[RMDB]
Chemical mapping of a 177-nucleotide RNA with 2A3 and DMS. For 2A3 the reverse transcriptase was SuperScript II with manganese. Values cover nucleotides 27 to 126. The RNA was probed in 150 mM KOAc, 10 mM MgCl2 and 150 mM bicine (pH 8.5) at 24 C.
RNA sequence: GGGAACGACUCGAGUAGAGUCGAAAAGAUAUGGAGCUGGGACCGAGCUGUGAUCGGAAACGAUCAUACAGCGAUGAGGUUGCAGCUCCUAAGUCAAAAGGGCUUGGUAGUUCGCUACCAAGCCCAAGUACCAAAUCAAGUUCGCUUGAUUUGGUACAAAAGAAACAACAACAACAAC
Reactivity to 2A3 in 0.01 (KOAc 150mM, MgCl2 10mM, bicine 150mM(pH8.5), 24C), signal-to-noise 1, nucleotides 027 to 126: g000a010u020a000u020g000g000a000g000c000u030g040g260g050a000c020c070g140a040g000c000u010g010u020g000a010u020c000g020g000a020a000a000c010g000a000u020c000a040u280a030c010a000g010c010g180a250u300g200a080g000g050u010u040g060c000a000g020c000u000c000c010u000a000a000g000u000c000a000a000a110a180g050g000g000c000u000u000g070g000u040a040g000u130u150c300g040c110u010a000c000c010a000a000g010c000c000c000a010a010
Reactivity to DMS in 0.01 (KOAc 150mM, MgCl2 10mM, bicine 150mM(pH8.5), 24C), signal-to-noise 4, nucleotides 027 to 126: g010a010u000a030u010g000g010a010g010c000u000g000g000g000a000c000c000g010a090g030c000u000g020u000g000a010u000c000g020g010a010a000a030c000g010a010u000c010a120u000a100c040a010g010c000g010a200u010g040a200g010g010u000u000g000c010a010g010c000u000c000c010u000a000a050g000u010c010a090a080a150a180g020g000g000c000u000u000g000g000u000a010g020u000u010c290g020c000u000a000c010c000a000a010g010c000c000c000a000a020